[RMDB]
RNA sequence: GGGAACGACUCGAGUAGAGUCGAAAACACACUACGAGGCAUACAGGUAUUUGAUCAAUUAAGUUGCUCCUCAACCGACCCAUUUGAAUAGUGUAGCCGACUCGUACCACAUCAAAUAAGGCUAUCACUCUAACGCCCUUUUCGAAGGGCGUUAGAGAAAAGAAACAACAACAACAAC
Reactivity to 2A3 in 0.01 (KOAc 150mM, MgCl2 10mM, bicine 150mM(pH8.5), 24C), signal-to-noise 3, nucleotides 027 to 126: c000a000c000a000c020u120a060c050g070a020g000g030c030a020u050a020c010a040g070g090u050a110u000u190u150g090a080u080c030a090a090u080u080a070a000g000u030u010g000c000u060c020c000u030c000a020a050c040c010g040a050c000c020c030a070u130u100u140g120a060a060u090a030g070u000g020u070a000g010c030c010g010a050c020u010c020g050u060a040c000c020a100c060a100u100c030a000a040a160u170a100a000g010g010c010u030a050u010c020a050
Reactivity to DMS in 0.01 (KOAc 150mM, MgCl2 10mM, bicine 150mM(pH8.5), 24C), signal-to-noise 1, nucleotides 027 to 126: c090a090c240a130c050u030a000c050g010a090g000g000c120a050u000a040c100a070g000g030u070a030u000u000u000g010a140u000c180a070a020u050u000a130a140g000u020u000g020c060u000c020c000u050c050a050a080c150c020g000a050c060c010c000a200u020u020u030g000a070a130u000a020g000u000g020u000a060g010c020c000g030a050c070u000c080g000u000a070c080c030a110c140a120u000c080a000a000a000u010a080a200g000g000c000u000a180u010c070a060
Description: The data come from the RNA Mapping Database (RMDB), library OK1LIB. The record gives the reactivity of an RNA of 177 nucleotides to 2A3 and DMS. DMS adducts were read by reverse transcription with MarathonRT.